Source: RMDB library OK1LIB, as collected in RNAgym. This 177-nucleotide RNA was probed chemically with 2A3.
RNA sequence: GGGAACGACUCGAGUAGAGUCGAAAAUGGUUAGAUAUGUUUUAGGCGGCGUGAACAUAUCAUUGGCUCAGGAUAAAUAUUAAUUAGGCUAAUUGGCAAUAGACCCUAAGCCGCCUAUAGGGUCUACACCUAGAUGUGCGUUCGCGCACAUCUAGGUAAAAGAAACAACAACAACAAC
Reactivity to 2A3 in 0.01 (KOAc 150mM, MgCl2 10mM, bicine 150mM(pH8.5), 24C), signal-to-noise 1, nucleotides 027 to 126: u040g070g040u070u050a030g000a000u030a000u040g000u000u050u000u000a060g000g000c060g000g000c000g040u280g030a030a000c000a000u040a000u010c040a000u000u140g010g000c000u000c110a050g030g000a000u060a250a030a120u110a040u040u300a090a030u150u040a070g080g000c020u000a070a220u130u300g060g000c020a030a030u000a040g000a000c000c000c000u000a000a180g050c000c000g000c000c000u000a000u000a000g000g000g000u020c000u000a000c000
The 2A3 profile rests on 616 reads. 2A3 adducts were read by reverse transcription with SuperScript II with manganese.